[RMDB]
RNA sequence: GGGAACGACUCGAGUAGAGUCGAAAAAAUCAUCGUCAAAAUUACAUUCUACAAAUUGUGCCAAUUCAAGCCAUCGUUUAGCGCUACCGAGCGCGGCUACAAUUCGGUGAUAUGAGGCAUCAUUAGGCGCCACCUUUAUGCCUAUGGCAGCAUUUAACAGAUACACUCCGUUCGCGGAGUGUAUCUGAAAAGAAACAACAACAACAAC
Reactivity to 2A3 in 0.01 (KOAc 150mM, MgCl2 10mM, bicine 150mM(pH8.5), 24C), signal-to-noise 1, nucleotides 027 to 156: a000a000u120c080a050u100c020g110u020c040a060a000a000a070u110u080a080c030a080u070u000c040u100a190c000a140a160a100u100u100g010u050g030c000c010a020a040u040u040c020a020a100g000c000c010a060u030c050g120u040u100u120a050g000c000g050c000u030a090c000c150g090a000g010c000g000c030g020g040c020u030a010c040a040a120u040u010c020g020g000u000g000a000u030a040u220g080a040g070g000c000a010u010c040a010u040u110a030g000g000c020g070c090c020a040c000c010u110u020u000a020u120g000c000c000u010a010u040g020g000c010a020g010c000a030u050u130u000a100a040

Overview: An RNA of 207 nucleotides, treated with 2A3 and read out base by base. The RNA was probed in 150 mM KOAc, 10 mM MgCl2 and 150 mM bicine (pH 8.5) at 24 C.